[RMDB]
RNA sequence: GGGAACGACUCGAGUAGAGUCGAAAAAGAGAGCUGAGAUCCUGAGAUCAGAGUCUCUCAGCUAGAGGAGAAGUCUCGAUCGAAGUCUCGAGACUGACUGAAGGAUCCUUCUCCUAGUCGACUGACUAGGAAGGAGACUGAGAUCGAAGCUAGUCAGUCUCUAGUGACAAUUCGUUGUCACUAGAGAAAAAGAAACAACAACAACAAC
Reactivity to DMS in 0.01 (KOAc 150mM, MgCl2 10mM, bicine 150mM(pH8.5), 24C), signal-to-noise 3, nucleotides 027 to 156: a150g010a130g000a100g040c020u010g010a300g010a020u000c000c010u010g020a160g040a090u000c040a110g010a150g010u000c040u000c010u000c010a020g010c050u000a090g010a120g030g020a090g020a120a060g010u000c000u010c020g030a040u000c020g030a240a160g030u010c090u000c040g010a100g010a030c040u000g010a090c030u000g000a180a090g020g010a130u010c010c020u010u000c060u000c010c000u000a020g020u010c010g020a230c260u020g010a100c010u000a010g000g000a030a030g020g000a060g030a110c050u000g010a250g010a070u000c010g010a210a070g010c020u000a060g010u000c050a130g000
Reactivity to 2A3 in 0.01 (KOAc 150mM, MgCl2 10mM, bicine 150mM(pH8.5), 24C), signal-to-noise 4, nucleotides 027 to 156: a020g110a010g010a000g000c010u020g010a010g020a030u060c020c030u050g010a080g040a190u200c050a030g070a040g100u020c010u000c000u010c040a010g070c040u070a050g010a050g110g030a090g020a080a010g020u000c000u000c030g000a020u040c040g070a110a020g050u000c020u010c040g010a010g010a010c000u010g030a020c020u050g040a040a030g050g000a020u010c010c000u050u060c040u000c000c000u000a000g000u000c040g110a300c170u300g000a000c000u000a000g010g000a000a020g010g000a010g010a010c030u050g030a030g000a100u040c040g010a040a000g040c030u030a010g060u040c000a010g060

Source information:
An RNA of 207 nucleotides, treated with DMS and 2A3 and read out base by base. For DMS, 4,328 sequencing reads were counted. For 2A3, 2,612 sequencing reads were counted. Source: RMDB library OK3TST, as collected in RNAgym. Values are in units of 0.01, from 0 to 300, in steps of 10. Values cover nucleotides 27 to 156.